[RMDB]
RNA sequence: GGGAACGACUCGAGUAGAGUCGAAAAGCUCAGGGAGAAUCGGGGUGAGGACAGAAUGCACCUCUGCAGCGUACAUGCUGGACUGCAUUCCUUUGAUCAUAACACAUUAUUUGGUCCAUUUUCCAGCUCAGUGGCACCAUCAGAUCCCACCGCCCAAGUGGGGAUAUUACUUCGGUAAUAUCCCCACAAAAGAAACAACAACAACAAC
Reactivity to 2A3 in 0.01 (KOAc 150mM, MgCl2 10mM, bicine 150mM(pH8.5), 24C), signal-to-noise 2, nucleotides 027 to 156: g030c030u010c050a010g040g030g000a030g130a130a170u070c090g020g020g040g030u030g010a060g050g030a000c020a090g080a030a000u050g030c010a060c010c080u010c110u190g030c010a020g020c010g060u070a080c060a120u130g000c020u000g000g060a120c140u020g010c000a020u070u050c010c060u160u170u130g070a060u120c040a050u130a140a060c030a020c030a120u130u130a120u100u140u070g000g000u050c020c020a040u050u080u030u000c030c000a010g030c000u010c030a020g010u130g030g000c060a010c000c000a010u080c000a010g020a080u150c000c010c030a030c000c030g000c000c020c020a040a050